[RMDB]
Background:
This 177-nucleotide RNA was probed chemically with 2A3 and DMS. For 2A3, 8,955 sequencing reads were counted. For DMS the reverse transcriptase was MarathonRT.
RNA sequence: GGGAACGACUCGAGUAGAGUCGAAAAUCAUAAAGCUCGAUCGGCGUGCCGACCUGCUCGAUAUGACCGGCAUUGAGCACCACGAGACGGUCGGCCAUGGUCAUGGCUUCCAUCUGGUCGUGGGUGAGCACCCUAUUUUAUUCGUAAAAUAGGGUGCAAAAGAAACAACAACAACAAC
Reactivity to 2A3 in 0.01 (KOAc 150mM, MgCl2 10mM, bicine 150mM(pH8.5), 24C), signal-to-noise 5, nucleotides 027 to 126: u090c020a030u130a120a100a030g010c010u020c050g030a050u030c020g050g030c060g070u150g010c000c010g010a020c010c030u060g010c030u010c010g020a050u020a080u180g140a140c040c040g020g020c040a040u040u210g050a020g020c060a040c020c020a040c020g030a030g020a030c020g000g000u030c030g020g000c000c000a010u020g010g020u040c040a040u100g050g000c000u080u000c010c010a030u000c030u060g050g020u040c010g050u070g010g030g010u060g020a020
Reactivity to DMS in 0.01 (KOAc 150mM, MgCl2 10mM, bicine 150mM(pH8.5), 24C), signal-to-noise 6, nucleotides 027 to 126: u020c090a120u000a070a110a090g000c010u000c200g020a030u000c030g020g010c140g030u010g020c020c000g000a040c020c040u000g020c030u000c010g000a080u010a050u000g010a110c070c060g010g020c170a120u010u000g010a090g000c030a110c070c060a120c040g000a060g010a070c080g010g000u000c050g010g000c000c030a010u000g010g010u010c070a080u000g000g010c030u000u000c040c020a070u000c040u000g010g000u000c030g010u000g000g010g000u010g000a160